[RMDB]
RNA sequence: GGGAACGACUCGAGUAGAGUCGAAAAACUAUGGCCUUCGUUAUGUUGUUGGUUAAACACAAACACACCUUUUUGACACUUUUCUUGUUGCCUGUGGCUAUUUGUUUGACUUAUGCAAACAUAGUCUAGAUUCUUAGAAGUUCGCUUCUAAGAAUCUAAAAGAAACAACAACAACAAC
Reactivity to DMS in 0.01 (KOAc 150mM, MgCl2 10mM, bicine 150mM(pH8.5), 24C), signal-to-noise 2, nucleotides 027 to 126: a080c090u000a080u000g000g000c040c010u010u010c080g000u000u000a110u010g010u010u010g030u000u010g000g010u000u020a040a060a070c090a090c080a040a050a060c080a070c080a090c070c020u000u000u000u000u000g000a080c080a080c040u000u000u000u000c020u000u000g010u000u000g010c020c020u000g030u000g010g010c000u000a030u000u000u020g010u000u000u000g020a070c070u010u000a130u010g010c040a040a020a060c010a010u000a010g000u000c020u000
Reactivity to 2A3 in 0.01 (KOAc 150mM, MgCl2 10mM, bicine 150mM(pH8.5), 24C), signal-to-noise 2, nucleotides 027 to 126: a000c080u070a100u120g070g000c010c010u010u090c040g050u080u040a070u210g100u130u040g000u060u010g050g040u070u120a110a090a010c040a030c020a050a100a010c020a000c000a020c050c000u000u130u030u060u100g030a010c000a030c050u100u100u020u040c000u010u080g030u010u050g000c000c000u020g030u000g040g010c000u010a020u060u130u040g050u000u020u010g040a060c050u130u210a070u250g000c000a010a060a000c000a010u000a000g000u000c020u000